[RMDB]
RNA sequence: GGGAACGACUCGAGUAGAGUCGAAAAAGAACAAAUUCAAAUAUCAAUGCAAACGGUGGGCAUGUUAUGCUGAAAAGGCUCGAGGGACAAGUCAAGGUACUAGCUAUUUCGUGAGUUCCUCGGGCAAGAGUCAGUGAUUCUUCGGAAUCACUGACUCAAAAGAAACAACAACAACAAC
Reactivity to DMS in 0.01 (KOAc 150mM, MgCl2 10mM, bicine 150mM(pH8.5), 24C), signal-to-noise 1, nucleotides 027 to 126: a030g010a170a110c000a090a130a060u010u000c070a070a100a030u000a080u000c050a130a150u000g030c150a070a030a070c160g000g000u000g010g000g000c010a020u000g010u000u000a110u000g000c170u040g000a060a020a060a150g020g020c000u000c020g030a010g040g000g080a010c050a120a090g000u070c000a010a020g020g000u000a010c040u000a110g020c140u000a090u030u000u000c040g000u000g000a300g040u000u000c000c000u000c030g090g010g000c010a000a010
Reactivity to 2A3 in 0.01 (KOAc 150mM, MgCl2 10mM, bicine 150mM(pH8.5), 24C), signal-to-noise 1, nucleotides 027 to 126: a000g120a020a020c040a010a060a030u190u300c070a010a080a020u160a090u020c060a060a160u060g070c030a040a000a220c060g100g070u070g170g000g040c000a000u000g000u060u150a050u030g090c110u050g110a030a030a020a020g180g000c000u000c000g000a000g000g000g000a030c000a000a140g010u050c000a000a000g120g000u080a030c040u040a000g140c000u080a000u100u070u090c110g000u000g000a010g000u000u000c000c000u000c000g000g000g000c000a000a000
The record gives the reactivity of an RNA of 177 nucleotides to DMS and 2A3. The reactions ran in a buffer of 150 mM KOAc, 10 mM MgCl2 and 150 mM bicine (pH 8.5), at 24 C. It was measured as part of the RMDB libraries RFM100 and RFMREP. For DMS the reverse transcriptase was MarathonRT.